[RMDB]
This 207-nucleotide RNA was probed chemically with 2A3 and DMS.
Conditions: 150 mM KOAc, 10 mM MgCl2 and 150 mM bicine (pH 8.5), 24 C.
Values cover nucleotides 27 to 156.
For 2A3 the reverse transcriptase was SuperScript II with manganese.
The 2A3 profile rests on 4,139 reads.
DMS adducts were read by reverse transcription with MarathonRT.
The DMS profile rests on 6,347 reads.
RNA sequence: GGGAACGACUCGAGUAGAGUCGAAAAAAGAGGAAGUACGGGCAUCUACGCGAGUUCAGCGAUGUCAUGUCGAAGGCGGUCGCAUCGUGACAACCUUUGACUUCGUUUGCGACAACCUAGGUUUCGUCGCUGCCGUUGCGUUCUUCCUCGGCGCAGGUACUAGCCAUGUGUUCGCACAUGGCUAGUAAAAAGAAACAACAACAACAAC
Reactivity to 2A3 in 0.01 (KOAc 150mM, MgCl2 10mM, bicine 150mM(pH8.5), 24C), signal-to-noise 3, nucleotides 027 to 156: a000a000g010a000g000g010a000a020g000u040a020c030g020g020g010c030a060u020c060u100a060c070g010c010g070a080g080u120u210c080a010g050c010g020a010u010g030u060c030a030u090g030u060c010g020a040a010g010g000c030g010g010u020c010g030c050a140u100c130g100u120g040a010c020a020a060c030c000u070u040u060g020a040c000u040u050c050g020u020u100u110g010c010g010a000c020a010a010c010c040u100a080g020g090u020u040u110c070g000u000c020g010c030u010g020c030c010g040u060u100g040c000g020u030u010c000u010u000c000c000u010c010g000g000c070g010c040a020g000g100
Reactivity to DMS in 0.01 (KOAc 150mM, MgCl2 10mM, bicine 150mM(pH8.5), 24C), signal-to-noise 2, nucleotides 027 to 156: a090a070g020a060g020g010a080a090g000u000a050c070g040g030g020c030a090u000c020u000a090c030g020c040g010a110g030u000u020c070a160g040c060g000a060u000g000u000c090a060u000g010u000c010g000a030a030g030g010c080g020g040u000c010g020c070a160u000c190g050u010g000a060c040a050a050c030c030u000u000u010g010a060c040u010u000c040g020u000u000u000g040c040g050a080c040a030a050c040c010u010a190g040g000u000u020u010c060g020u000c050g020c010u000g010c050c020g020u000u000g000c000g000u000u000c030u000u000c010c000u010c010g010g010c050g020c070a120g000g000